[RMDB]
Structure probing data (2A3) for a 207-nucleotide construct. 2A3 adducts were read by reverse transcription with SuperScript II with manganese. The reactions ran in a buffer of 150 mM KOAc, 10 mM MgCl2 and 150 mM bicine (pH 8.5), at 24 C. 2A3 is a SHAPE reagent: it acylates the 2'-hydroxyl of flexible nucleotides of all four kinds.

RNA sequence: GGGAACGACUCGAGUAGAGUCGAAAAGAGGGCAUUCGUGCCCUCGGAUCAGGGGUCCUCACCGGCGUGGGACAUGCUCUGAAGCCUCCACGGAGCAACAGCCCACGAACUACCCGUGAGGACGGAGGCACCCGCUAUUUUUACAUUCGUGUAAAAACCAUAUGAGUUGCUUCGGCAACUCAUAUGGAAAAGAAACAACAACAACAAC
Reactivity to 2A3 in 0.01 (KOAc 150mM, MgCl2 10mM, bicine 150mM(pH8.5), 24C), signal-to-noise 2, nucleotides 027 to 156: g000a000g000g030g010c060a000u170u180c300g110u140g000c020c000c010u000c000g010g000a020u040c110a040g170g020g000g040u000c020c000u010c000a010c060c110g050g000c050g050u070g000g080g030a050c040a170u080g040c010u000c000u010g020a080a050g030c000c020u000c000c000a030c000g000g010a010g010c000a000a020c040a070g160c000c000c000a010c010g010a030a050c030u190a070c020c000c010g000u000g000a000g010g000a010c020g000g010a020g000g000c030a070c020c000c000g090c030u150a160u090u060u010u020u010a010c010a000u040u120c250g080u150g000u120a000a030a090a010a010